[RMDB]
RNA sequence: GGGAACGACUCGAGUAGAGUCGAAAAGCCUAACAGUUCGCUGUUAGGCAAAUGCACAGACUUCGGAACUGUGAAAAACACAACAGAAGUGUCUAUGCGAGGAUCGUUGCGUCUUCGGACGCAACAACGCUUCUAGCUGAUUCGUCAGCUAGAAGCGAAAAGAAACAACAACAACAAC
Reactivity to DMS in 0.01 (KOAc 150mM, MgCl2 10mM, bicine 150mM(pH8.5), 24C), signal-to-noise 2, nucleotides 027 to 126: g030c010c010u030a000a010c000a020g020u000u040c230g010c010u000g010u000u000a000g000g000c000a000a020a050u010g010c010a000c040a010g040a020c000u000u020c010g030g020a160a130c210u010g010u000g000a020a130a070a060a160c010a010c030a020a110c040a070g030a000a030g000u010g000u010c010u000a090u000g000c010g000a130g010g000a120u000c100g000u000u000g000c010g020u000c000u020u000c160g000g000a020c000g000c000a000a000c000a060a060
Reactivity to 2A3 in 0.01 (KOAc 150mM, MgCl2 10mM, bicine 150mM(pH8.5), 24C), signal-to-noise 3, nucleotides 027 to 126: g000c010c000u000a000a010c010a000g080u090u110c170g080c100u020g000u000u010a010g000g000c000a010a000a010u120g000c000a020c000a000g020a010c010u030u030c030g060g050a160a060c050u020g000u030g090a080a000a010a020a000c040a020c020a080a030c010a040g000a060a010g060u030g010u070c010u020a020u050g020c030g050a050g090g070a100u170c090g000u000u000g020c000g020u010c010u000u050c180g100g010a010c000g020c000a000a000c000a010a000
An RNA of 177 nucleotides, treated with DMS and 2A3 and read out base by base. It was measured as part of the RMDB library M2PK50. The 2A3 profile rests on 4,005 reads. The RNA was probed in 150 mM KOAc, 10 mM MgCl2 and 150 mM bicine (pH 8.5) at 24 C.